[RMDB]
RNA sequence: GGGAACGACUCGAGUAGAGUCGAAAACCUCCCACCCUGACUAUCGCAAAUGCUGUGCUCUCUAGAGCUCUGCUCACAAGACUGUAGGGUCGAGAGUGGCAGUUCCAGGCCUCAGCAAGAAAGCCUUUGCAUGUGGCUGCACCAGGGAGAGGAGAGGACACUAUCCCCCAUUCGUGGGGGAUAGUGUAAAAGAAACAACAACAACAAC
Reactivity to DMS in 0.01 (KOAc 150mM, MgCl2 10mM, bicine 150mM(pH8.5), 24C), signal-to-noise 1, nucleotides 027 to 156: c030c040u020c000c040c020a300c030c010c000u010g040a140c060u010a170u030c060g000c090a050a070a040u000g000c010u030g000u000g020c010u000c000u000c020u000a090g040a100g010c000u000c060u000g040c040u000c040a170c060a220a180g030a130c040u000g030u010a090g000g020g080u010c080g000a090g010a020g030u000g000g000c070a040g010u000u040c080c080a090g020g000c040c050u040c070a040g000c070a050a020g010a210a030a060g000c000c000u000u000u000g040c040a080u000g030u000g060g000c030u010g070c090a140c030c030a100g030g010g010a080g000a300g010g000a180g000a250g010g020
Reactivity to 2A3 in 0.01 (KOAc 150mM, MgCl2 10mM, bicine 150mM(pH8.5), 24C), signal-to-noise 2, nucleotides 027 to 156: c000c000u010c020c010c000a040c020c020c010u020g020a050c020u100a120u300c160g000c090a050a090a100u220g000c010u000g010u000g000c000u020c000u000c020u070a050g040a060g120c010u010c010u020g000c010u020c040a160c010a130a170g090a220c070u080g030u190a000g080g000g000u030c010g000a000g000a000g040u130g130g000c010a010g000u000u060c040c040a050g070g000c020c000u000c000a000g010c000a060a000g070a200a130a040g080c020c030u060u100u150g060c090a230u090g030u040g050g000c030u050g020c020a020c010c000a000g010g030g000a000g040a080g040g020a140g000a000g020g020
The record gives the reactivity of an RNA of 207 nucleotides to DMS and 2A3. The data come from the RNA Mapping Database (RMDB), library OK3TST. Conditions: 150 mM KOAc, 10 mM MgCl2 and 150 mM bicine (pH 8.5), 24 C. For DMS the reverse transcriptase was MarathonRT.